[RMDB]
RNA sequence: GGGAACGACUCGAGUAGAGUCGAAAAAACGCGAAAGUCGGACGGCGGCCAUGAGUCGCAACGCAAAGCCGCGGCAAGUGGAGUUAGCGAGAACAGACUAGGCUUUGGUUUCUUCAAGUGAAGCGGUAAAAGGUUCGAGACUUCGGUCUCGAACCAAGUAGUUUCGAAUGUUCGCAUUCGAAACUACAAAAGAAACAACAACAACAAC
Reactivity to 2A3 in 0.01 (KOAc 150mM, MgCl2 10mM, bicine 150mM(pH8.5), 24C), signal-to-noise 1, nucleotides 027 to 156: a000a000c090g010c020g050a240a080a010g060u100c050g070g010a080c100g020g010c000g020g000c000c030a110u130g000a000g040u040c000g000c080a100a030c030g030c090a070a130a040g050c010c020g000c020g010g010c040a030a030g010u020g020g020a060g040u080u090a020g010c010g010a010g040a080a020c030a020g080a060c040u030a100g030g030c000u030u030u020g010g020u020u090u060c000u040u020c060a090a000g010u020g090a050a010g010c020g020g010u080a090a090a020a010g020g040u040u000c000g000a010g000a000c000u020u140c280g060g020u000c000u000c000g000a000a000c000c000a010a010

Chemical mapping of a 207-nucleotide RNA with 2A3. Source: RMDB library M2RFPK, as collected in RNAgym. The reactions ran in a buffer of 150 mM KOAc, 10 mM MgCl2 and 150 mM bicine (pH 8.5), at 24 C.